[RMDB]
RNA sequence: GGGAACGACUCGAGUAGAGUCGAAAAGAUAUGGAGCUGUUGUCAGAAGGAGUAUGUGGGUCAACAGCAGAGCUCGGAAACGAGCUCUGACAUGACCCAUGAAACUUCUUGGAUUUACAGCUCCUAAGUCAAAUCUCCAGGCUUCGGCCUGGAGAAACUCUUUUACGAACUUCGGUUCGUAAAAGAGAAAAGAAACAACAACAACAAC
Reactivity to 2A3 in 0.01 (KOAc 150mM, MgCl2 10mM, bicine 150mM(pH8.5), 24C), signal-to-noise 1, nucleotides 027 to 156: g040a030u080a060u240g000g000a020g000c000u010g020u040u010g030u000c010a010g080a120a000g020g020a010g010u030a040u300g010u070g010g000g010u000c000a060a070c030a190g010c000a000g010a000g000c000u010c010g020g000a060a070a050c020g000a000g000c000u010c000u000g020a010c000a010u040g000a000c000c000c020a040u080g020a010a040a010c000u000u000c010u010u020g010g000a000u210u300u180a000c020a000g000c000u000c000c000u000a020a000g000u020c030a030a030a050u000c000u000c000c000a000g000g010c010u090u220c300g130g000c010c000u000g010g000a000g000a000a000a000